[RMDB]
RNA sequence: GGGAACGACUCGAGUAGAGUCGAAAAAGAGCCAGCCUUGGGACAGCCUUUCCCACUGGAGCUGCCAGUCAGGACCGCCGUGAGAGCCAGUGCCUGGAGGCCAACACCCUGGUCUUCAGUCACUGGGUCGAACAGUAUAAUUCGUUAUACUGUUCGAAAAAGAAACAACAACAACAAC
Reactivity to DMS in 0.01 (KOAc 150mM, MgCl2 10mM, bicine 150mM(pH8.5), 24C), signal-to-noise 9, nucleotides 027 to 126: a070g000a130g010c030c030a060g010c060c050u000u000g010g010g000a090c110a090g000c030c040u000u000u000c010c010c010a140c100u010g000g000a110g010c060u000g010c020c020a080g000u000c070a070g000g010a090c060c040g010c040c040g010u000g010a120g010a160g010c000c000a010g010u000g000c080c000u000g000g000a010g000g000c000c000a030a120c170a120c170c140c080u000g010g010u000c000u000u000c000a000g000u000c000a000c000u000g000g000g010
Reactivity to 2A3 in 0.01 (KOAc 150mM, MgCl2 10mM, bicine 150mM(pH8.5), 24C), signal-to-noise 8, nucleotides 027 to 126: a000g090a020g030c020c010a000g010c010c030u070u100g030g020g030a040c020a030g030c000c010u040u050u030c010c010c000a010c040u040g040g020a050g040c020u040g030c030c010a030g040u080c020a010g020g060a060c030c020g010c010c020g080u100g080a180g000a020g110c000c000a000g000u000g000c000c000u000g000g000a000g000g000c000c000a110a030c050a110c050c020c020u020g000g000u000c000u010u000c000a000g000u000c000a000c000u000g000g000g010
This 177-nucleotide RNA was probed chemically with DMS and 2A3. The RNA was probed in 150 mM KOAc, 10 mM MgCl2 and 150 mM bicine (pH 8.5) at 24 C. For DMS, 58,546 sequencing reads were counted. It was measured as part of the RMDB library OK2TRN. Values cover nucleotides 27 to 126.